[RMDB]
RNA sequence: GGGAACGACUCGAGUAGAGUCGAAAAACUAUUUGUUCUAUAGCAAACAAACCCGAAACACAGCAUAUAUUUGUUAUAUAUGCUUUGUGGAACACAGCUGUUAGGACGUGAGCCAUCAGGGUCCAAACCAUGCCGACUACUUCGGUAGUCGGCAUGGAAAAGAAACAACAACAACAAC
Reactivity to 2A3 in 0.01 (KOAc 150mM, MgCl2 10mM, bicine 150mM(pH8.5), 24C), signal-to-noise 1, nucleotides 027 to 126: a000c090u110a050u150u050u160g010u010u000c040u110a050u230a180g000c000a000a000a000c000a000a070a000c000c020c000g190a070a060a000c000a000c000a000g000c000a000u010a000u000a000u080u060u170g260u300u120a030u000a000u050a000u000g000c060u000u040u000g000u000g020g040a000a000c220a000c010a070g000c040u070g040u090u070a110g000g000a060c170g090u150g090a060g050c010c010a140u130c000a080g030g020g020u000c000c000a000a000a000
Conditions: 150 mM KOAc, 10 mM MgCl2 and 150 mM bicine (pH 8.5), 24 C. Structure probing data (2A3) for a 177-nucleotide construct. 2A3 adducts were read by reverse transcription with SuperScript II with manganese. The data come from the RNA Mapping Database (RMDB), library OK1LIB.